An RNA of 177 nucleotides, treated with DMS and read out base by base. Values cover nucleotides 27 to 126.

[RMDB]
RNA sequence: GGGAACGACUCGAGUAGAGUCGAAAACGGGGUGUCGCUUUCCAUGACCGGCCAGUCUCCGGCUGUGAGUGCCGGUGUGCCGGGGACAUCCGGCCACAGCCAGGUGUUGUCAGACAUCAGCGCAGUGUGGAUCGGGUAGUUUCGACUACCCGAUCCAAAAAGAAACAACAACAACAAC
Reactivity to DMS in 0.01 (KOAc 150mM, MgCl2 10mM, bicine 150mM(pH8.5), 24C), signal-to-noise 1, nucleotides 027 to 126: c100g020g000g030g000u000g020u000c010g000c130u000u000u050c030c020a230u020g000a070c000c010g020g010c060c140a220g020u010c110u000c010c030g020g000c010u000g030u020g030a110g000u030g010c020c000g000g010u000g000u010g010c040c000g000g000g000g000a130c080a060u010c000c010g030g000c080c020a000c080a030g010c020c020a130g030g000u010g020u010u010g010u000c140a160g000a060c050a060u000c050a100g000c120g030c020a120g020u020g030
The RNA was probed in 150 mM KOAc, 10 mM MgCl2 and 150 mM bicine (pH 8.5) at 24 C. For DMS, 897 sequencing reads were counted. DMS adducts were read by reverse transcription with MarathonRT.